Conditions: 150 mM KOAc, 10 mM MgCl2 and 150 mM bicine (pH 8.5), 24 C. This 207-nucleotide RNA was probed chemically with DMS and 2A3.
RNA sequence: GGGAACGACUCGAGUAGAGUCGAAAAGGAGCGACAAGUAUUUAGCUUGAGAUAGCUAAAUCACUUCGGUAUGAUUAGGGUGAGACCUAGGAACCGUAGGGGUAUUCUCAAAGGAAGCUUUUGCAGUGAAGGAAGAUACGAUUCGUCGUAUCUUCAAGUCUAUUACUCACUUCGGUGAGUAAUAGACAAAAGAAACAACAACAACAAC
Reactivity to DMS in 0.01 (KOAc 150mM, MgCl2 10mM, bicine 150mM(pH8.5), 24C), signal-to-noise 3, nucleotides 027 to 156: g000g000a050g030c020g020a110c040a070a050g030u000a020u000u010u000a000g000c010u010u000g010a240g010a140u010a030g000c010u000a000a000a010u000c070a040c020u000u000c020g000g010u000a070u000g010a160u010u000a080g010g000g040u010g010a200g010a130c010c020u000a100g010g010a100a070c030c030g020u010a060g020g000g000g020u000a060u000u000c030u000c030a090a090a090g000g020a070a100g030c050u000u000u000u000g030c030a100g030u000g020a110a150g010g000a030a020g000a000u000a030c030g010a060u000u000c300g020u000c000g020u000a010u000c000u000u000c000a030a100
Reactivity to 2A3 in 0.01 (KOAc 150mM, MgCl2 10mM, bicine 150mM(pH8.5), 24C), signal-to-noise 5, nucleotides 027 to 156: g070g020a040g040c040g070a060c030a060a020g020u040a010u010u000u000a000g010c000u020u030g030a040g000a070u200a030g020c010u010a000a020a000u040c060a010c010u050u050c040g020g030u120a070u180g100a130u100u080a050g020g020g000u030g070a100g030a030c000c030u030a040g020g040a040a040c020c040g010u060a040g020g000g000g000u040a050u110u080c060u010c020a040a050a020g070g010a060a000g020c010u040u070u110u140g040c080a040g010u040g130a100a030g090g000a010a000g000a000u000a000c010g000a010u000u070c130g050u000c000g000u080a000u000c000u000u000c000a010a010